[RMDB]
RNA sequence: GGGAACGACUCGAGUAGAGUCGAAAAGAUAUGGAGCGUAUCGGCUGGAGCUUACGUAACAUCUAUUAAGACUCGGAAACGAGUCUUAAUAGUGGUAAGCGUUGAAAGCCUUUACGCUCCUAAGUCAGUAAUCGCAAUAGUUCGCUAUUGCGAUUACAAAAGAAACAACAACAACAAC
Reactivity to DMS in 0.01 (KOAc 150mM, MgCl2 10mM, bicine 150mM(pH8.5), 24C), signal-to-noise 2, nucleotides 027 to 126: g000a080u020a300u010g000g020a010g010c020g020u000a020u000c110g010g030c010u000g020g000a110g020c000u000u000a000c010g010u000a070a110c190a010u010c000u000a010u000u000a000a010g020a010c000u010c000g000g020a100a170a220c000g000a010g000u000c000u000u000a010a000u000a000g030u000g010g010u010a010a000g010c000g020u030u000g010a110a180a040g010c000c000u000u000u010a000c000g010c000u000c010c000u000a010a050g010u000c050a200

The data come from the RNA Mapping Database (RMDB), library TTRINS. Structure probing data (DMS) for a 177-nucleotide construct. Reactivities are given for positions 27 through 126. The RNA was probed in 150 mM KOAc, 10 mM MgCl2 and 150 mM bicine (pH 8.5) at 24 C.